[RMDB]
RNA sequence: GGGAACGACUCGAGUAGAGUCGAAAAGAUGAGAUUGCUGGCGUUGCCUGGCAAUGACCACUCAAUGACAUUAUUAUUCUGAAUGGUCAAUCUAUGAGGCUAUCAUAGGGUUUCAAUAAUUUGUGUGCAUAGCCUUGUCUUUCGAGACAAGGCUAUGAAAAGAAACAACAACAACAAC
Reactivity to DMS in 0.01 (KOAc 150mM, MgCl2 10mM, bicine 150mM(pH8.5), 24C), signal-to-noise 5, nucleotides 027 to 126: g000a130u010g000a100g010a040u000u000g000c020u000g010g010c030g010u010u000g020c110c010u000g020g000c020a010a060u000g010a030c010c010a020c020u000c010a070a100u010g010a080c260a090u000u000a090u010u000a100u010u010c100u000g020a020a020u000g000g000u010c020a040a090u010c010u000a010u000g000a030g010g010c210u010a070u000c000a010u000a010g000g000g010u000u000u010c030a040a070u020a070a120u000u010u000g000u000g020u010g010
Reactivity to 2A3 in 0.01 (KOAc 150mM, MgCl2 10mM, bicine 150mM(pH8.5), 24C), signal-to-noise 4, nucleotides 027 to 126: g130a060u120g030a000g000a090u000u030g000c020u000g030g000c060g240u210u200g020c040c010u020g020g000c000a000a060u040g010a030c010c000a020c010u050c010a040a210u120g040a100c060a050u100u270a100u150u060a060u260u130c040u030g030a020a030u000g000g030u020c020a010a030u000c010u010a040u020g030a010g220g080c070u120a060u120c010a020u020a010g000g030g070u000u060u020c050a090a060u150a130a110u050u160u110g090u060g020u080g060
Conditions: 150 mM KOAc, 10 mM MgCl2 and 150 mM bicine (pH 8.5), 24 C. An RNA of 177 nucleotides, treated with DMS and 2A3 and read out base by base. Values cover nucleotides 27 to 126. It was measured as part of the RMDB library OK2TRN.